Conditions: 150 mM KOAc, 10 mM MgCl2 and 150 mM bicine (pH 8.5), 24 C. Chemical mapping of a 207-nucleotide RNA with 2A3 and DMS. The data come from the RNA Mapping Database (RMDB), library OK3TST.
[RMDB]
RNA sequence: GGGAACGACUCGAGUAGAGUCGAAAAAGGACGAGACGACGCCGAAGACGUUCGGAAUCUCGAUCGGCGACGACCGCGAAUCCGAUUCCGGCCUGGCUCGCGUGACACGCUCGGCGCAGGAGUUUUGGAACGGUCUGGCAACACUAUUCGGAUCAGGAACCGCAAUAAAGUUCGCUUUAUUGCGGUUAAAAGAAACAACAACAACAAC
Reactivity to 2A3 in 0.01 (KOAc 150mM, MgCl2 10mM, bicine 150mM(pH8.5), 24C), signal-to-noise 1, nucleotides 027 to 156: a000g070g000a040c040g000a000g000a010c050g050a080c030g020c050c020g010a050a050g080a050c030g030u020u050c050g000g080a070a070u040c030u060c080g160a200u020c040g040g000c020g020a120c060g010a030c000c080g000c080g080a040a010u000c000c010g000a000u000u010c000c020g010g000c080c000u000g010g050c000u050c080g040c000g030u080g080a080c040a000c130g010c010u030c080g010g020c050g000c010a040g010g060a050g000u070u110u090u080g010g000a080a060c030g000g020u020c000u050g000g000c070a060a000c000a040c170u020a050u120u040c000g060g000a080u120c030a010g080g050
Reactivity to DMS in 0.01 (KOAc 150mM, MgCl2 10mM, bicine 150mM(pH8.5), 24C), signal-to-noise 1, nucleotides 027 to 156: a110g010g030a120c010g020a170g090a070c010g010a120c030g010c010c020g000a090a130g030a090c070g020u010u000c040g020g010a060a060u000c030u020c010g000a150u010c020g000g010c150g030a160c010g040a030c050c020g020c130g000a120a120u000c030c030g020a160u000u010c040c010g000g030c020c020u000g000g000c070u020c020g030c030g000u000g020a120c100a090c070g040c030u000c170g010g000c040g000c000a080g040g000a090g000u000u000u000u000g080g020a110a120c020g000g000u000c000u000g010g000c080a100a100c080a120c060u000a040u030u010c040g070g010a070u000c100a140g000g030